Background
The record gives the reactivity of an RNA of 207 nucleotides to 2A3 and DMS. The RNA was probed in 150 mM KOAc, 10 mM MgCl2 and 150 mM bicine (pH 8.5) at 24 C. Values cover nucleotides 27 to 156. For 2A3 the reverse transcriptase was SuperScript II with manganese.
RNA sequence: GGGAACGACUCGAGUAGAGUCGAAAAGAUUAUGUGGGAGAUGCGCCCUGUCGUGUCACUGGAAACAGAAUUGCGAGUCGCUCGCCCUAGCGAUAUUGAUGUGUACGGUAGCGUACACUGUGCUACUUUAAGGUAUGAUGACGAUACCACGUCAAAAAUCAGUCGCUAUAUUCGUAUAGCGACUGAUAAAAGAAACAACAACAACAAC
Reactivity to 2A3 in 0.01 (KOAc 150mM, MgCl2 10mM, bicine 150mM(pH8.5), 24C), signal-to-noise 4, nucleotides 027 to 156: g030a030u170u170a050u160g050u100g030g010g010a110g020a030u020g020c020g010c050c040c030u060g150u150c030g000u010g010u000c020a020c070u040g010g060a080a080a030c030a020g090a120a140u130u150g030c020g000a010g020u030c000g010c030u010c020g020c020c000c000u010a010g000c010g040a010u020a100u150u220g120a120u100g010u010g000u000a000c000g010g150u100a030g200c010g010u000a010c000a000c020u020g000u060g020c020u010a060c030u060u110u110a090a070g020g000u070a030u100g110a050u080g010a020c030g010a010u010a050c010c030a040c020g030u020c010a020a050a060a010
Reactivity to DMS in 0.01 (KOAc 150mM, MgCl2 10mM, bicine 150mM(pH8.5), 24C), signal-to-noise 2, nucleotides 027 to 156: g010a110u000u000a040u010g040u000g030g000g010a140g000a090u010g020c030g010c030c070c040u000g020u000c050g000u000g010u000c040a130c040u000g060g000a150a130a130c030a050g000a090a150u010u010g000c030g000a090g010u000c010g000c030u010c030g010c010c040c030u000a100g030c030g020a080u000a060u000u000g010a080u000g030u000g030u000a040c030g030g000u000a100g040c060g000u000a030c000a010c020u000g030u000g010c010u000a100c120u000u000u000a120a060g020g010u010a030u010g000a110u010g010a080c020g000a100u000a050c050c030a090c080g030u010c020a030a070a070a140